[RMDB]
RNA sequence: GGGAACGACUCGAGUAGAGUCGAAAAAAAAGAUAUGGAUCGAACUCGCGAAGAACUAUGGAUUGAAAUAUAUCGGAAACGAUAUAUCGUACGUCCAUAGGGAGCGAGAUUCGAUCCUAAGUCAAAACAAUAGGCUAUCGUUCGCGAUAGCCUAUUGAAAAGAAACAACAACAACAAC
Reactivity to DMS in 0.01 (KOAc 150mM, MgCl2 10mM, bicine 150mM(pH8.5), 24C), signal-to-noise 2, nucleotides 027 to 126: a070a060a100a130g000a000u000a020u020g000g000a020u000c000g020a000a010c000u000c010g020c010g010a100a180g010a110a150c000u010a010u000g000g000a010u000u000g010a120a090a010u000a000u000a000u000c000g010g010a010a000a010c000g020a010u000a010u000a000u000c070g000u000a140c100g000u000c000c000a010u000a000g000g000g010a000g010c000g010a010g010a100u000u000c000g000a000u000c000c000u000a000a040g000u000c010a090a060a120a190
Reactivity to 2A3 in 0.01 (KOAc 150mM, MgCl2 10mM, bicine 150mM(pH8.5), 24C), signal-to-noise 2, nucleotides 027 to 126: a010a000a000a020g020a000u020a020u020g000g000a010u000c000g020a010a000c000u010c000g010c020g250a300a030g000a000a000c000u000a010u010g000g010a010u050u300g040a060a030a000u000a000u000a000u010c010g000g000a000a000a010c010g000a000u000a000u000a000u020c040g050u210a160c220g010u000c010c000a010u010a000g000g000g000a020g000c000g000a010g010a010u000u000c000g000a000u000c000c000u000a000a000g000u010c020a010a060a020a070
Structure probing data (DMS and 2A3) for a 177-nucleotide construct. For 2A3, 4,159 sequencing reads were counted. Values cover nucleotides 27 to 126. The reactions ran in a buffer of 150 mM KOAc, 10 mM MgCl2 and 150 mM bicine (pH 8.5), at 24 C. For DMS, 3,878 sequencing reads were counted. For DMS the reverse transcriptase was MarathonRT.